This 177-nucleotide RNA was probed chemically with 2A3 and DMS. For DMS, 1,871 sequencing reads were counted. It was measured as part of the RMDB library TTRDES. Conditions: 150 mM KOAc, 10 mM MgCl2 and 150 mM bicine (pH 8.5), 24 C. DMS adducts were read by reverse transcription with MarathonRT.
RNA sequence: GGGAACGACUCGAGUAGAGUCGAAAAGAUAUGGAGCCCAUCCCUCAACAGCGGUGAUCGGAAACGAUCACCGACAUGAGGAGAUGUGGCUCCUAAGUCAAAGGAAGCUACGUUCGCGUAGCUUCCACCUAGCCUCAUACUUCGGUAUGAGGCUAGGAAAAGAAACAACAACAACAAC
Reactivity to 2A3 in 0.01 (KOAc 150mM, MgCl2 10mM, bicine 150mM(pH8.5), 24C), signal-to-noise 2, nucleotides 027 to 126: g030a000u090a060u160g000g000a000g000c030c000c000a000u000c000c010c000u020c000a130a180c020a220g110c000g000g020u000g020a000u010c000g000g070a090a060a080c030g020a010u000c000a000c000c010g020a010c000a070u090g000a000g030g090a280g010a020u010g000u190g000g000c000u000c000c010u000a000a010g020u000c060a030a080a040g000g000a000a000g000c000u000a010c000g080u030u240c300g010c010g200u010a000g000c020u000u000c000c000a000
Reactivity to DMS in 0.01 (KOAc 150mM, MgCl2 10mM, bicine 150mM(pH8.5), 24C), signal-to-noise 2, nucleotides 027 to 126: g010a050u000a300u000g000g020a020g030c000c000c000a020u000c000c000c000u000c010a030a170c300a300g000c040g000g020u000g020a000u000c000g000g000a190a070a300c000g000a030u000c000a000c000c010g010a000c030a150u000g000a000g000g000a050g030a000u000g000u010g040g000c000u000c000c000u010a010a060g000u020c040a070a140a170g000g010a060a010g000c000u010a000c000g000u000u030c240g050c040g050u000a000g010c000u000u010c000c010a030
For 2A3, 5,132 sequencing reads were counted.